Conditions: 150 mM KOAc, 10 mM MgCl2 and 150 mM bicine (pH 8.5), 24 C. Chemical mapping of a 177-nucleotide RNA with DMS.
[RMDB]
RNA sequence: GGGAACGACUCGAGUAGAGUCGAAAAAAUUGUUGCAAUGGCCUUGAAUUUGUUGCUUCUGGGCUCUUCCAACUGUGAACAAGGACUUUUGACUGGAUUAUGGCAUUGAGGGAGCAUCCAUUGCGAGGCCAGAAACUAUGUUCGCAUAGUUUCUGGCAAAAGAAACAACAACAACAAC
Reactivity to DMS in 0.01 (KOAc 150mM, MgCl2 10mM, bicine 150mM(pH8.5), 24C), signal-to-noise 2, nucleotides 027 to 126: a060a080u000u010g000u000u020g020c110a050a030u000g010g000c120c030u000u010g020a050a090u000u010u010g020u000u000g010c080u000u000c010u010g000g010g010c020u010c100u000u000c040c010a020a120c090u000g020u000g010a070a090c110a100a110g000g030a100c200u000u000u010u000g000a100c050u010g000g000a060u000u000a040u000g000g010c030a120u000u000g010a070g000g030g000a030g010c050a080u000c010c070a030u000u000g000c010g020a050g010